Structure probing data (2A3 and DMS) for a 177-nucleotide construct.
RNA sequence: GGGAACGACUCGAGUAGAGUCGAAAAGAUAUGGAAUUGCGCUCCGAAGAACUUAACUCCCCACCUCGGAAACGAGAGGUUAAGGGAGGAGAGCAAUUCCUAAGUCAAAUCACCCUUCGGGGUGAAAGUAUUCUAAAUCGUUCGCGAUUUAGAAUACAAAAGAAACAACAACAACAAC
Reactivity to 2A3 in 0.01 (KOAc 150mM, MgCl2 10mM, bicine 150mM(pH8.5), 24C), signal-to-noise 3, nucleotides 027 to 126: g010a000u000a000u040g000g000a010a010u010u010g000c030g020c010u000c000c030g260a300a040g020a000a010c000u000u000a000a010c010u130c050c060c000c090a300c120c030u000c000g000g020a000a010a000c000g010a010g010a040g060g010u000u000a000a000g020g010g010a000g000g000a000g000a000g020c000a000a000u000u000c000c000u020a000a000g010u000c010a000a090a150u030c000a010c010c000c000u010u060c300g090g010g010g000u000g000a030a000a000
Reactivity to DMS in 0.01 (KOAc 150mM, MgCl2 10mM, bicine 150mM(pH8.5), 24C), signal-to-noise 3, nucleotides 027 to 126: g010a020u000a030u020g000g000a010a010u000u000g000c000g010c000u010c000c010g000a090a220g000a200a190c010u000u000a000a020c010u010c040c020c030c070a200c270c000u010c000g000g010a040a010a030c010g020a020g010a130g020g020u010u000a020a000g000g000g010a000g000g010a000g000a030g010c020a020a000u000u000c000c000u010a000a060g000u000c000a060a130a110u000c010a000c000c000c000u000u010c180g030g010g000g010u010g000a010a030a090
The RNA was probed in 150 mM KOAc, 10 mM MgCl2 and 150 mM bicine (pH 8.5) at 24 C. It was measured as part of the RMDB library TTRDEL. For 2A3 the reverse transcriptase was SuperScript II with manganese.